Source: RMDB library OK3TST, as collected in RNAgym.
This 207-nucleotide RNA was probed chemically with 2A3 and DMS.
For DMS, 2,132 sequencing reads were counted.
The RNA was probed in 150 mM KOAc, 10 mM MgCl2 and 150 mM bicine (pH 8.5) at 24 C.
For DMS the reverse transcriptase was MarathonRT.
RNA sequence: GGGAACGACUCGAGUAGAGUCGAAAAGCUUUAGGAGCAAAUAUGGUCAGGAUUGUCUUGGAGGACGACCUUUGUGACCAAAAGGGUGUGUGUAAGACAUCUCGCUGCACACGUCGCGAAUCUCACAUCCCCCACACGCAACUUAAAGGCAGAGGUCCACAACUUUCAGAUUCGUCUGAAAGUUGUGAAAAGAAACAACAACAACAAC
Reactivity to 2A3 in 0.01 (KOAc 150mM, MgCl2 10mM, bicine 150mM(pH8.5), 24C), signal-to-noise 4, nucleotides 027 to 156: g020c010u050u090u120a070g030g070a050g000c030a080a080a100u170a120u100g010g010u030c020a010g020g080a280u030u070g040u020c060u100u230g130g050a090g050g000a010c020g000a000c010c000u040u010u100g060u000g020a020c000c000a010a040a040a030g070g000g000u030g000u000g000u010g020u060a100a070g020a040c050a100u080c060u020c100g020c050u080g030c020a080c020a030c190g050u060c030g010c010g050a050a120u020c020u020c030a030c000a070u100c030c020c000c040c010a020c010a000c030g030c000a040a160c080u070u130a060a000a010g020g000c020a010g010a000g060g030u020c010
Reactivity to DMS in 0.01 (KOAc 150mM, MgCl2 10mM, bicine 150mM(pH8.5), 24C), signal-to-noise 1, nucleotides 027 to 156: g000c020u000u010u000a100g010g010a240g050c000a040a060a150u000a130u020g060g010u000c030a120g000g000a010u000u000g020u000c060u000u000g020g020a170g010g000a050c040g010a030c010c020u000u000u000g000u020g000a110c050c030a040a070a080a060g030g040g000u010g000u020g060u010g000u000a050a080g000a050c090a070u000c020u020c040g000c070u010g020c100a100c080a100c080g000u000c140g000c040g030a080a070u010c030u000c090a020c010a080u010c040c010c020c050c020a110c060a010c050g000c050a040a070c060u000u010a030a160a110g010g000c010a060g010a040g000g020u000c010